[RMDB]
RNA sequence: GGGAACGACUCGAGUAGAGUCGAAAAGGGCGAUCGCGCUCGGCGCGACGGGCAGCGCGCCGUCGAGGAACACCGGAUCCGACACGCGGCCGACGUGCCAGAGCUGCAGGAAGAUGCGGCCGCCGGAGAGCUACUACCGUUUCGACGGUAGUAGCUCAAAAGAAACAACAACAACAAC
Reactivity to DMS in 0.01 (KOAc 150mM, MgCl2 10mM, bicine 150mM(pH8.5), 24C), signal-to-noise 2, nucleotides 027 to 126: g000g010g000c040g000a040u000c050g000c020g000c010u000c050g020g000c010g000c000g000a100c070g020g000g000c070a150g010c060g010c030g000c020c030g040u000c050g000a230g000g000a060a120c230a200c110c070g000g000a090u000c030c000g000a110c030a080c130g000c090g000g030c000c000g010a050c050g020u000g020c000c020a080g000a060g030c060u040g020c050a090g050g030a120a160g020a120u010g010c000g000g000c010c020g000c000c070g010g000a170
Reactivity to 2A3 in 0.01 (KOAc 150mM, MgCl2 10mM, bicine 150mM(pH8.5), 24C), signal-to-noise 1, nucleotides 027 to 126: g010g010g010c010g070a040u030c050g010c000g000c000u040c000g010g000c020g050c010g040a100c040g030g060g000c050a070g080c040g000c020g020c050c020g020u010c030g020a180g060g120a100a050c100a120c080c120g070g070a070u110c020c000g000a000c010a000c090g030c010g000g000c000c020g000a070c090g030u040g010c000c000a020g010a000g030c100u130g000c010a020g160g080a030a070g110a030u260g190c000g020g000c000c000g000c000c000g000g000a110

The record gives the reactivity of an RNA of 177 nucleotides to DMS and 2A3.
Source: RMDB library OK2TRN, as collected in RNAgym.
Values cover nucleotides 27 to 126.
DMS adducts were read by reverse transcription with MarathonRT.
For 2A3 the reverse transcriptase was SuperScript II with manganese.
The DMS profile rests on 1,146 reads.
The reactions ran in a buffer of 150 mM KOAc, 10 mM MgCl2 and 150 mM bicine (pH 8.5), at 24 C.